An RNA of 177 nucleotides, treated with 2A3 and DMS and read out base by base.
RNA sequence: GGGAACGACUCGAGUAGAGUCGAAAACGCGGUCGUUACGACGACCGCGAAGCGUAGCUGCGUUAAUUUAAUAGCUACGCUUAAUAAAUUUAAUUAACGCAAACGUGGUACUUACGAGUACCACGAAGAUUAUCAUGGUAUUCGUACCAUGAUAAUCAAAAGAAACAACAACAACAAC
Reactivity to 2A3 in 0.01 (KOAc 150mM, MgCl2 10mM, bicine 150mM(pH8.5), 24C), signal-to-noise 9, nucleotides 027 to 126: c010g000c000g000g000u010c010g020u050u070a100c300g020a010c000g000a000c090c000g000c000g000a000a000g000c000g000u010a000g000c030u050g000c010g020u010u020a040a050u110u110u200a190a200u280a070g000c000u000a000c000g000c000u000u020a000a000u060a010a020a000u080u100u140a030a050u040u040a010a000c010g000c020a080a050a030c030g000u000g000g000u010a000c010u030u040a060c260g040a010g010u000a000c010c010a000c000g000a010a000
Reactivity to DMS in 0.01 (KOAc 150mM, MgCl2 10mM, bicine 150mM(pH8.5), 24C), signal-to-noise 4, nucleotides 027 to 126: c040g050c010g000g020u000c010g040u000u010a120c190g020a110c010g060a010c010c010g030c000g030a010a000g000c000g020u000a000g040c030u010g010c010g020u000u000a020a070u030u020u040a100a120u060a060g000c010u000a000c000g000c000u020u030a020a050u040a060a040a110u000u030u010a090a020u020u010a010a010c000g020c020a160a140a300c010g040u000g000g000u000a010c020u020u000a130c170g010a070g000u000a010c000c000a000c000g000a010a040
The reactions ran in a buffer of 150 mM KOAc, 10 mM MgCl2 and 150 mM bicine (pH 8.5), at 24 C. For 2A3 the reverse transcriptase was SuperScript II with manganese. Values cover nucleotides 27 to 126. It was measured as part of the RMDB library OK1LIB.